[RMDB]
RNA sequence: GGGAACGACUCGAGUAGAGUCGAAAACUGCAGGUCAACGGAUCGUCUUCAGAUCAGCUAUUGCAGAAGAAAGGUCAGCCAAGCGCUCUGGGCCUGAUCGACUGUAUAUAGGAGCUUCUGAUUUCAACCAGAAGCUAACUCUCUCCGAAACAAUGAGCUAAAUCGAUGAGUUCGCUCAUCGAUUUAGAAAAGAAACAACAACAACAAC
Reactivity to DMS in 0.01 (KOAc 150mM, MgCl2 10mM, bicine 150mM(pH8.5), 24C), signal-to-noise 2, nucleotides 027 to 156: c040u000g000c030a020g010g030u000c020a020a060c070g020g040a030u000c010g010u000c080u010u000c110a200g020a010u000c020a120g010c000u000a070u000u000g020c000a030g010a080a180g010a070a100a020g040g020u000c000a070g010c030c020a070a160g000c150g000c060u010c050u000g030g020g010c040c010u030g000a140u000c030g000a170c000u010g020u010a080u000a150u010a070g000g000a120g030c000u010u000c000u010g010a080u000u010u010c120a050a050c040c000a020g000a040a030g050c000u000a010a050c060u000c020u000c020u000c040c030g010a110a080a090c060a040a080u000g000a140g010
Reactivity to 2A3 in 0.01 (KOAc 150mM, MgCl2 10mM, bicine 150mM(pH8.5), 24C), signal-to-noise 4, nucleotides 027 to 156: c040u050g000c050a040g050g070u100c070a080a050c080g090g000a040u050c030g090u000c060u160u100c060a030g000a070u020c030a000g060c000u030a020u080u030g000c000a010g020a070a010g000a030a040a000g000g000u010c000a010g010c020c010a120a080g090c100g020c120u030c060u130g080g020g000c010c020u070g010a150u030c010g030a010c000u020g040u080a060u000a010u020a210g080g030a010g010c010u000u000c010u000g090a150u190u230u190c090a060a050c020c000a000g000a020a000g000c000u010a020a020c010u020c000u010c000u040c050c020g040a070a040a020c070a050a150u170g010a010g020